Structure probing data (DMS and 2A3) for a 207-nucleotide construct.
RNA sequence: GGGAACGACUCGAGUAGAGUCGAAAAGUAAAGAUCGCUCUUUUACUCGGCAUGAUACCACCGUUAUCGGGUCAACAGAGUAGUUGCAAAUGACAACAAUGCUCAGGGUUAUGGUCUCGCUGCCUAAAAAAUCGUUUAACGUUCGCGUUAAACGAAAGACCAUGAUAACCUUCGGGUUAUCAUGGUCAAAAGAAACAACAACAACAAC
Reactivity to DMS in 0.01 (KOAc 150mM, MgCl2 10mM, bicine 150mM(pH8.5), 24C), signal-to-noise 1, nucleotides 027 to 156: g000u000a030a010a040g030a040u010c130g000c050u010c030u000u000u010u010a030c000u010c000g000g000c030a060u010g000a060u000a050c020c020a030c000c010g100u010u010a000u000c090g040g030g020u000c000a160a240c150a120g010a080g010u000a160g010u000u000g040c040a070a130a120u010g030a060c010a060a030c020a080a140u020g000c000u010c010a100g000g050g020u020u000a050u010g050g010u000c060u000c080g010c000u000g000c020c030u020a020a040a050a080a050a060u010c010g000u000u000u000a000a000c000g020u000u000c300g000c020g010u000u000a010a000a000c000g000a010a020a050
Reactivity to 2A3 in 0.01 (KOAc 150mM, MgCl2 10mM, bicine 150mM(pH8.5), 24C), signal-to-noise 4, nucleotides 027 to 156: g040u030a020a040a000g040a100u130c060g040c130u030c030u010u090u030u030a040c030u020c020g000g000c020a030u100g000a010u040a060c010c010a010c000c020g110u060u060a020u060c040g000g000g000u010c010a000a010c060a010g020a010g020u080a020g000u040u040g030c050a080a230a300u210g060a180c010a030a000c010a060a170u110g000c000u020c030a010g070g000g000u050u130a050u110g020g000u020c030u020c090g020c060u100g020c020c030u130a080a060a020a010a000a030u020c000g000u000u000u000a000a000c010g020u030u040c200g000c000g120u010u000a000a000a000c000g010a020a010a000
For DMS the reverse transcriptase was MarathonRT. The DMS profile rests on 1,916 reads.